[RMDB]
RNA sequence: GGGAACGACUCGAGUAGAGUCGAAAAGGGUGAGACCUAGGAACCGUAGGGGUAUUCUCAAAGGAAGCUGUUGCAGUGACGCCCAUGUAAGUGGGAUAUAACAACAGAACUCGUAUGAGUAGCCUAAUAAAUCGGACCUUCUUCGGAAGGUCCGAAACAUCCAGUACUCGUUCGCGAGUACUGGAUGAAAAGAAACAACAACAACAAC
Reactivity to DMS in 0.01 (KOAc 150mM, MgCl2 10mM, bicine 150mM(pH8.5), 24C), signal-to-noise 1, nucleotides 027 to 156: g070g000g040u010g010a190g020a080c030c000u010a070g000g000a030a110c040c060g040u000a180g000g030g030g020u000a030u000u000c060u000c020a060a070a110g000g040a130a100g000c050u000g010u000u000g000c000a160g090u020g000a240c170g010c020c020c000a100u010g010u000a040a180g020u000g000g010g030a150u010a030u010a160a050c000a030a020c060a060g000a040a100c020u010c030g020u010a190u000g000a080g020u000a130g000c000c030u020a020a130u000a060a050a170u000c000g050g020a060c000c000u000u000c000u000u010c260g010g010a040a000g040g020u010c020c000g000a010a030a070
Reactivity to 2A3 in 0.01 (KOAc 150mM, MgCl2 10mM, bicine 150mM(pH8.5), 24C), signal-to-noise 2, nucleotides 027 to 156: g010g010g000u070g020a070g020a050c010c030u060a050g040g130a050a040c030c020g040u080a070g000g080g010g000u050a140u160u070c020u000c030a050a020a010g050g020a050a020g030c020u010g000u020u000g000c100a070g030u020g080a020c130g020c030c000c010a020u110g080u150a180a150g030u010g030g010g000a010u010a000u050a100a010c010a010a000c020a000g020a060a040c010u010c060g030u130a090u130g000a010g030u030a000g030c000c000u100a160a090u100a080a140a020u040c020g000g000a000c000c000u020u000c000u010u020c090g060g000a000a000g000g000u010c000c000g000a000a000a000
Conditions: 150 mM KOAc, 10 mM MgCl2 and 150 mM bicine (pH 8.5), 24 C. This 207-nucleotide RNA was probed chemically with DMS and 2A3. High DMS reactivity at an A or C suggests that its Watson-Crick edge is free. Reactivities are given for positions 27 through 156. The 2A3 profile rests on 1,268 reads.